[RMDB]
RNA sequence: GGGAACGACUCGAGUAGAGUCGAAAAGAUAUGGAUUAAGGGAGCUGCCAUUCGGAAACGAAUGACAGCAUCGAUCUUACGGUCCUAAGUCAAAAGCAACACAAGAAGUUCGCUUCUUGUGUUGCAACUCUCCUAUUUACUUCGGUAAAUAGGAGAGAAAAGAAACAACAACAACAAC
Reactivity to DMS in 0.01 (KOAc 150mM, MgCl2 10mM, bicine 150mM(pH8.5), 24C), signal-to-noise 6, nucleotides 027 to 126: g000a050u000a260u000g000g000a030u000u000a080a060g010g010g010a050g020c010u000g010c010c000a020u000u000c000g000g000a090a060a200c000g000a010a010u010g000a010c000a010g010c000a050u000c130g010a070u010c010u000u010a070c300g020g010u000c010c010u010a070a080g010u000c050a080a060a120a140g000c000a000a010c000a010c000a010a000g000a010a010g010u000u020c260g010c010u000u000c010u000u000g000u010g000u000u000g000c010a020a020
Reactivity to 2A3 in 0.01 (KOAc 150mM, MgCl2 10mM, bicine 150mM(pH8.5), 24C), signal-to-noise 4, nucleotides 027 to 126: g020a020u090a060u170g020g010a010u050u090a120a190g060g020g000a050g000c010u010g010c000c010a000u000u010c020g010g030a060a050a030c010g000a010a000u010g000a010c020a010g000c020a020u110c020g010a020u010c010u040u060a100c190g060g010u000c010c010u040a110a050g050u050c040a000a010a020a200g000c000a000a000c000a000c000a000a000g010a000a000g030u090u200c230g090c200u000u000c000u000u010g010u000g010u000u000g000c000a000a000

The record gives the reactivity of an RNA of 177 nucleotides to DMS and 2A3. It was measured as part of the RMDB library TTRDEL. For DMS the reverse transcriptase was MarathonRT. The RNA was probed in 150 mM KOAc, 10 mM MgCl2 and 150 mM bicine (pH 8.5) at 24 C. 2A3 adducts were read by reverse transcription with SuperScript II with manganese.